Background:
An RNA of 207 nucleotides, treated with DMS and 2A3 and read out base by base. For 2A3 the reverse transcriptase was SuperScript II with manganese. The RNA was probed in 150 mM KOAc, 10 mM MgCl2 and 150 mM bicine (pH 8.5) at 24 C.
RNA sequence: GGGAACGACUCGAGUAGAGUCGAAAACAGAGCUGAUGGGCCAUGUACCUAUCCAAAAUGAGAUCCCCUCUUGCACACUGUGCUAAUUUGAGAUUCUCAUGCCUCCUACUUGGAGAGAUCUGGACUACUAACUGUAUGACGUUCGCGUCAUACAGAACCACUCGUAUUACUUCGGUAAUACGAGUGGAAAAGAAACAACAACAACAAC
Reactivity to DMS in 0.01 (KOAc 150mM, MgCl2 10mM, bicine 150mM(pH8.5), 24C), signal-to-noise 2, nucleotides 027 to 156: c020a090g000a070g000c010u000g030a050u000g020g000g070c010c040a150u000g030u000a020c020c010u010a030u000c020c090a040a040a120a120u000g010a060g010a050u000c020c040c020c080u000c060u000u010g010c010a050c020a130c210u020g030u010g020c050u010a020a070u000u000u010g000a060g000a100u000u000c010u000c000a030u000g000c040c010u030c020c010u000a110c160u020u000g010g010a060g000a080g010a020u000c030u000g000g010a160c050u000a170c190u000a060a200c000u000g010u000a000u000g000a010c000g010u000u000c300g040c000g000u000c000a000u000a010c010a000g000a050a090
Reactivity to 2A3 in 0.01 (KOAc 150mM, MgCl2 10mM, bicine 150mM(pH8.5), 24C), signal-to-noise 7, nucleotides 027 to 156: c020a000g030a000g040c070u090g020a030u040g020g010g000c070c090a190u200g070u140a090c010c010u020a030u000c010c040a060a030a030a100u020g010a010g000a050u050c030c020c000c000u030c010u010u060g000c010a020c040a080c140u250g010u000g010c030u060a070a140u100u080u150g030a040g000a020u060u010c010u000c010a010u030g030c010c000u010c000c010u130a290c110u130u260g000g000a010g000a010g010a020u010c020u040g000g050a040c040u100a040c010u060a300a060c010u010g000u000a000u000g000a000c000g010u030u000c200g020c000g080u020c000a000u010a000c000a000g000a000a010